The data come from the RNA Mapping Database (RMDB), libraries RFM100 and RFMREP. This 177-nucleotide RNA was probed chemically with 2A3 and DMS.
RNA sequence: GGGAACGACUCGAGUAGAGUCGAAAAAGGGAUGAGGCAGAGCAUGGGAUGGGGCUAUCAACAGAUGUAGAUUAUUCCUUGCACAAGAGAUGAUGAUGAGCUGUGAAUGAGUUCUGAGAGAUGGCUGCCAAUCUCUAUCUUUCGAGAUAGAGAUUGGAAAAGAAACAACAACAACAAC
Reactivity to 2A3 in 0.01 (KOAc 150mM, MgCl2 10mM, bicine 150mM(pH8.5), 24C), signal-to-noise 9, nucleotides 027 to 126: a000g070g020g020a070u090g030a050g040g010c040a010g020a030g060c050a060u090g010g020g030a040u080g010g010g020g010c010u030a030u090c030a020a090c010a050g060a080u100g070u100a040g010a080u060u060a020u120u070c020c000u030u080g030c060a040c020a100a030g030a010g010a080u120g000a030u030g010a020u050g020a020g010c020u020g030u050g070a050a070u080g010a020g050u070u020c030u040g040a040g000a010g010a080u050g040g000c020u030g020
Reactivity to DMS in 0.01 (KOAc 150mM, MgCl2 10mM, bicine 150mM(pH8.5), 24C), signal-to-noise 8, nucleotides 027 to 126: a060g000g010g010a080u010g010a060g010g010c060a060g000a080g010c100a060u010g010g010g010a080u010g010g010g000g010c060u000a030u010c040a060a080c090a060g000a060u010g020u010a070g010a070u010u010a080u000u010c010c010u010u010g010c100a060c100a030a060g010a080g000a060u000g000a050u010g000a080u010g010a060g010c030u000g010u020g010a050a050u010g000a070g010u000u000c030u010g010a090g010a090g020a060u010g010g010c040u000g010